An RNA of 207 nucleotides, treated with 2A3 and read out base by base.
The data come from the RNA Mapping Database (RMDB), library OK3TST.
For 2A3 the reverse transcriptase was SuperScript II with manganese.
High 2A3 reactivity points to a flexible backbone, as in loops and unpaired stretches.
Conditions: 150 mM KOAc, 10 mM MgCl2 and 150 mM bicine (pH 8.5), 24 C.
RNA sequence: GGGAACGACUCGAGUAGAGUCGAAAAUGAUUUGUAGGAUUUGCUAAUUUCCAUGGGCAAAUACUCCCACUGUGGCUGAUCUCCACCAAUUUCACUGGAUAUGGAGUUGGGAAGAAAUGGGCACAAUUGGCUCUCAUGAGCCCUUGCCAACUGGCUCCGUUGAUGCCAAGUUCGCUUGGCAUCAACGAAAAGAAACAACAACAACAAC
Reactivity to 2A3 in 0.01 (KOAc 150mM, MgCl2 10mM, bicine 150mM(pH8.5), 24C), signal-to-noise 1, nucleotides 027 to 156: u120g020a060u160u140u220g190u190a010g090g050a120u000u000u090g000c040u030a130a000u290u010u000c040c040a010u080g040g000g000c030a070a000a030u010a030c000u030c000c000c000a030c130u060g040u140g070g100c080u060g110a040u020c060u000c010c000a030c030c010a010a040u000u050u110c030a060c080u080g060g060a110u030a120u220g000g000a000g000u010u010g030g000g030a070a070g010a070a070a010u030g030g000g070c040a050c030a180a050u050u030g020g000c000u000c030u000c170a090u220g000a030g000c000c000c020u080u050g000c010c000a110a110c220u070g010g000c000u060c000